Structure probing data (DMS and 2A3) for a 177-nucleotide construct.

RNA sequence: GGGAACGACUCGAGUAGAGUCGAAAACGUGCAACGGAACAUCCUUCAACUCGACAGGCCGCAACAUCUGCUUUAACUGAGACGUUCGGAUGUAUACCAACAUGUAAGCGUUGGCUAUGCUCGGAACCGUAGGAUGGGAGUUCGCUCCCAUCCUACGAAAAGAAACAACAACAACAAC
Reactivity to DMS in 0.01 (KOAc 150mM, MgCl2 10mM, bicine 150mM(pH8.5), 24C), signal-to-noise 2, nucleotides 027 to 126: c140g040u010g030c090a090a180c170g010g000a120a070c030a030u000c030c030u000u010c050a090a060c060u000c010g000a080c100a130g000g010c010c090g000c040a090a040c100a080u000c030u000g010c060u010u000u000a070a070c100u000g000a190g020a060c120g030u000u000c010g020g000a060u010g000u000a010u000a040c020c000a000a010c040a060u000g000u020a130a230g010c110g000u000u000g000g000c260u010a010u000g000c020u000c030g000g010a030a070c070
Reactivity to 2A3 in 0.01 (KOAc 150mM, MgCl2 10mM, bicine 150mM(pH8.5), 24C), signal-to-noise 2, nucleotides 027 to 126: c040g040u060g000c000a050a040c040g040g000a050a040c020a060u000c010c000u040u100c020a080a090c030u000c050g060a020c040a020g040g070c040c010g030c000a020a010c010a100u020c030u060g080c040u060u090u170a130a070c040u100g070a050g040a050c070g010u030u030c020g130g020a080u150g000u030a040u030a030c010c010a020a010c020a030u160g060u140a110a050g140c050g020u010u000g030g000c050u030a000u020g000c000u000c020g080g010a040a060c010
Annotation
The DMS profile rests on 1,117 reads. For 2A3, 1,662 sequencing reads were counted. Reactivities are given for positions 27 through 126. DMS adducts were read by reverse transcription with MarathonRT.